[RMDB]
RNA sequence: GGGAACGACUCGAGUAGAGUCGAAAAGCGACGUGAUCGAGGACGCGAUAGAAGACGACGUCGACGCCGUGGUCCACGCCGGCGACCUCUUUCACGAUCGCCGGCCGACGCUGGUCGACCUGCAGGGGGGACGCAGUAUGUUCGCAUACUGCGUCCCAAAAGAAACAACAACAACAAC
Reactivity to 2A3 in 0.01 (KOAc 150mM, MgCl2 10mM, bicine 150mM(pH8.5), 24C), signal-to-noise 2, nucleotides 027 to 126: g060c060g020a000c040g040u020g000a030u030c010g000a050g000g030a040c010g020c060g070a020u090a110g230a150a000g120a120c020g010a040c060g040u040c020g000a020c010g050c080c040g080u160g020g030u130c090c090a070c020g020c010c000g020g000c010g040a090c100c000u010c050u060u290u060c080a060c080g020a160u010c000g000c000c010g000g000c000c000g000a000c010g000c040u030g010g010u010c020g030a020c000c020u000g030c050a150g020g000g000
Reactivity to DMS in 0.01 (KOAc 150mM, MgCl2 10mM, bicine 150mM(pH8.5), 24C), signal-to-noise 1, nucleotides 027 to 126: g000c000g000a020c030g000u010g100a000u030c000g000a030g030g000a090c020g000c000g000a190u000a100g050a280a300g000a240c000g020a130c040g000u000c100g000a070c090g000c000c140g000u000g000g000u030c000c020a110c160g000c000c000g030g000c000g000a210c030c000u000c000u000u040u020c290a000c050g010a000u000c000g000c000c030g000g000c090c010g000a010c070g000c040u000g150g000u030c020g050a040c000c000u100g030c160a180g100g020g000
This 177-nucleotide RNA was probed chemically with 2A3 and DMS. The 2A3 profile rests on 926 reads. The reactions ran in a buffer of 150 mM KOAc, 10 mM MgCl2 and 150 mM bicine (pH 8.5), at 24 C.